[RMDB]
RNA sequence: GGGAACGACUCGAGUAGAGUCGAAAAGACACAAUUGACCGCCAGUUUUUGCCAACAGGCAGCUGAGAUAUCAUUAUGCCAAGCGACAUCUGGUAGCGCCUGAUGGAGUGUAUCGGCCAGAUGGUUAGGUGAAAAUAUAGUUCGCUAUAUUUUCACCAAAAGAAACAACAACAACAAC
Reactivity to DMS in 0.01 (KOAc 150mM, MgCl2 10mM, bicine 150mM(pH8.5), 24C), signal-to-noise 7, nucleotides 027 to 126: g010a090c060a050c090a080a100u000u000g000a060c050c060g010c080c020a050g000u000u000u010u010u010g000c020c030a080a110c170a080g010g020c010a050g020c080u000g000a080g010a080u000a080u000c030a040u000u000a090u000g020c060c070a070a130g000c080g000a060c020a020u010c010u000g000g010u010a070g020c080g000c020c010u000g010a120u000g010g010a090g000u000g010u010a070u000c120g000g010c010c030a050g000a040u000g000g000u000u000a080
Reactivity to 2A3 in 0.01 (KOAc 150mM, MgCl2 10mM, bicine 150mM(pH8.5), 24C), signal-to-noise 7, nucleotides 027 to 126: g020a000c010a000c010a140a170u090u090g040a050c010c020g010c020c000a010g010u020u020u080u240u190g050c050c020a110a070c040a200g020g000c000a010g000c030u040g060a020g010a110u100a020u070c040a040u030u180a080u200g040c010c020a070a010g050c030g060a050c000a020u010c010u030g050g030u050a040g050c050g050c040c020u070g030a090u100g040g020a060g030u090g010u030a110u190c050g010g000c020c000a040g020a040u030g010g110u050u100a060